[RMDB]
RNA sequence: GGGAACGACUCGAGUAGAGUCGAAAAUGAAAAAAAAAAGCUUAUUUCUUGGACAACAUUACUAACAGCAAAGUGUCAUAAAACUGCGAGGCGCAGCCCUUGGCUUGUUUAACCUUUUGUCACAGCACCCAGAUUGUAAUUUCGAUUACAAUCUGGGAAAAGAAACAACAACAACAAC
Reactivity to 2A3 in 0.01 (KOAc 150mM, MgCl2 10mM, bicine 150mM(pH8.5), 24C), signal-to-noise 6, nucleotides 027 to 126: u120g050a010a010a000a000a000a000a000a000a000a000g020c030u100u080a080u090u120u020c010u000u030g030g000a010c000a080a000c000a080u070u080a080c080u070a090a010c020a010g020c020a050a060a040g030u070g070u100c050a080u150a180a090a040a020c000u030g010c020g060a100g130g080c080g010c080a020g010c020c010c000u020u040g110g000c030u060u100g030u030u060u070a020a040c010c010u050u070u070u030g020u020c010a020c010a100g000c010a040
Reactivity to DMS in 0.01 (KOAc 150mM, MgCl2 10mM, bicine 150mM(pH8.5), 24C), signal-to-noise 2, nucleotides 027 to 126: u040g030a000a000a060a030a000a070a020a050a070a220g020c060u020u000a070u020u040u010c030u000u000g000g000a040c040a020a020c070a050u010u000a030c150u010a050a030c090a060g020c050a040a040a020g020u010g000u000c080a060u030a030a030a030a040c050u000g010c030g000a100g000g000c080g000c110a050g000c070c070c020u000u000g000g000c040u010u010g000u000u000u000a040a100c050c040u000u000u000u000g010u040c030a040c140a030g030c070a180